[RMDB]
RNA sequence: GGGAACGACUCGAGUAGAGUCGAAAACUAACGUGUUCCGAGGAAUUUGCAUCGCCGCGAACACGUCAUUUCUGGUCCACGGUUGUCAUUUCUUUGGUUUCCCGGGAGAUUGUAUCGUGGCCAACGUGGGUGGUCGGGUGCGGGGCACGACCUUCACCUGGCUGUUCUAUUUCGAUAGAACAGCCAGAAAAGAAACAACAACAACAAC
Reactivity to 2A3 in 0.01 (KOAc 150mM, MgCl2 10mM, bicine 150mM(pH8.5), 24C), signal-to-noise 1, nucleotides 027 to 156: c040u060a030a060c000g000u000g020u020u000c020c030g020a150g150g190a200a120u300u150u150g150c050a070u120c040g050c060c010g080c140g050a040a010c010a010c010g050u010c020a020u070u190u140c130u080g000g060u100c030c000a020c020g020g060u030u060g120u110c020a070u020u070u000c010u060u150u220g220g030u190u200u120c010c010c010g000g020g000a020g000a010u000u160g070u070a000u040c000g000u030g010g030c000c000a020a020c090g020u080g000g030g010u100g000g000u080c040g010g010g000u020g000c110g000g000g000g000c020a010c040g060a050c020c040u040u030c000a050c000

Structure probing data (2A3) for a 207-nucleotide construct. Reactivities are rounded to 0.1 and cut off at 0 and 3. The RNA was probed in 150 mM KOAc, 10 mM MgCl2 and 150 mM bicine (pH 8.5) at 24 C. 2A3 adducts were read by reverse transcription with SuperScript II with manganese. The 2A3 profile rests on 543 reads.